[RMDB]
RNA sequence: GGGAACGACUCGAGUAGAGUCGAAAAGCUGAAUAUGAAAUGAAAUUCAGGGAGAAGCAGAAACUAGAUGUAGACAGUGAAGUCUUUCCAAAUGAAAUGAUGUUCAAUGAUUCUGGUAAAUUUUCCAGUAAGGAUGUUGUUUCGACAACAUCCUUACAAAAGAAACAACAACAACAAC
Reactivity to DMS in 0.01 (KOAc 150mM, MgCl2 10mM, bicine 150mM(pH8.5), 24C), signal-to-noise 2, nucleotides 027 to 126: g030c040u000g000a070a030u000a110u000g000a080a090a070u010g000a060a110a090u010u000c030a030g010g000g020a080g010a070a050g000c070a100g000a120a100a050c040u010a070g020a070u010g010u000a080g010a130c100a070g000u010g010a110a120g010u000c010u000u000u000c020c060a050a090a110u020g000a010a030a050u000g010a050u000g000u010u000c020a040a080u000g010a090u000u010c000u000g020g000u000a020a070a130u000u000u000u000c010c020a190
Reactivity to 2A3 in 0.01 (KOAc 150mM, MgCl2 10mM, bicine 150mM(pH8.5), 24C), signal-to-noise 2, nucleotides 027 to 126: g010c000u030g060a020a000u140a010u110g050a110a050a100u080g030a100a130a110u080u010c010a020g050g000g030a120g010a070a000g000c060a040g040a090a110a020c040u040a020g020a120u060g060u110a050g070a170c000a010g020u000g020a050a010g010u000c000u020u060u000c050c030a110a140a110u100g020a000a030a020u090g030a000u100g090u060u000c030a000a110u090g020a040u040u010c000u020g000g050u100a110a120a150u080u080u010u020c000c010a010

Structure probing data (DMS and 2A3) for a 177-nucleotide construct. For DMS the reverse transcriptase was MarathonRT. For DMS, 1,824 sequencing reads were counted. For 2A3 the reverse transcriptase was SuperScript II with manganese. Source: RMDB library OK2TST, as collected in RNAgym.